[RMDB]
RNA sequence: GGGAACGACUCGAGUAGAGUCGAAAAUCACUGCAGCAACACGUGAGAGCAUAUAAAUAUUUGUGUGUGUGUGCUGUUGGUCCUUUCAGGGCCUUCAAAUUUCACGGUGGCGUUUAGCGCUUGUGUAGUCAUCGUAAUCAUUCGUGAUUACGAUGACAAAAGAAACAACAACAACAAC
Reactivity to 2A3 in 0.01 (KOAc 150mM, MgCl2 10mM, bicine 150mM(pH8.5), 24C), signal-to-noise 3, nucleotides 027 to 126: u080c010a020c060u060g000c010a060g000c030a050a060c010a000c030g070u130g080a170g020a030g080c040a000u120a010u080a090a280a040u260a130u130u220u060g080u010g000u000g000u010g000u010g040u000g060c010u000g010u000u050g000g010u010c010c000u120u190u150c180a020g040g000g000c000c000u030u050c050a050a060a050u090u160u070c010a010c020g140g020u060g090g040c030g070u120u150u260a080g010c020g000c000u250u230g060u020g040u070a050
Reactivity to DMS in 0.01 (KOAc 150mM, MgCl2 10mM, bicine 150mM(pH8.5), 24C), signal-to-noise 2, nucleotides 027 to 126: u000c060a120c060u000g000c010a030g010c040a080a080c040a060c010g020u010g020a070g030a160g000c010a020u010a050u000a040a090a140u020a110u000u000u010g020u000g020u000g010u000g010u000g010u000g030c040u000g010u000u000g010g020u000c000c000u000u010u000c290a060g030g000g000c010c000u000u000c110a040a090a150u000u000u010c010a020c010g000g010u000g030g030c090g020u000u010u010a130g010c040g000c030u010u010g030u000g020u000a110